[RMDB]
Overview: Structure probing data (DMS and 2A3) for a 177-nucleotide construct. As a SHAPE reagent, 2A3 marks flexible, mostly unpaired nucleotides at the ribose 2'-OH. DMS adducts were read by reverse transcription with MarathonRT. The data come from the RNA Mapping Database (RMDB), library OK1LIB. The DMS profile rests on 7,136 reads.

RNA sequence: GGGAACGACUCGAGUAGAGUCGAAAAGUGCCGAGUGAAAUUCAUAGGUGCGUCGCCAAUUUGGCGGAACGACCCGGUACUCCGCGUAGUCGCGACGUAAACGUUCGGUGUUGGCGUUCAGGCCUCACCUAGGGCAUAUCUUCGGAUAUGCCCUAGGAAAAGAAACAACAACAACAAC
Reactivity to DMS in 0.01 (KOAc 150mM, MgCl2 10mM, bicine 150mM(pH8.5), 24C), signal-to-noise 4, nucleotides 027 to 126: g010u040g030c010c000g000a070g020u010g010a070a150a100u020u030c120a120u040a130g000g060u010g010c010g000u000c000g040c000c070a090a150u020u020u030g000g010c000g000g010a020a040c080g000a050c030c020c030g000g000u010a140c100u000c000c010g010c000g020u010a040g000u000c290g000c010g010a010c010g020u000a010a060a120c030g030u000u000c040g010g020u010g000u020u000g000g000c100g000u000u000c090a100g030g000c030c000u010c100a300
Reactivity to 2A3 in 0.01 (KOAc 150mM, MgCl2 10mM, bicine 150mM(pH8.5), 24C), signal-to-noise 1, nucleotides 027 to 126: g120u060g000c000c000g010a010g060u240g140a190a080a110u290u190c090a090u110a090g150g000u050g030c010g000u000c000g000c000c000a000a110u040u040u300g090g000c000g020g000a030a050c010g080a100c030c060c010g000g000u050a050c010u030c000c000g000c000g050u050a050g070u120c000g000c010g000a010c030g000u010a000a050a050c040g000u040u000c060g000g030u000g060u120u070g010g020c040g000u050u100c030a040g060g050c000c020u020c010a050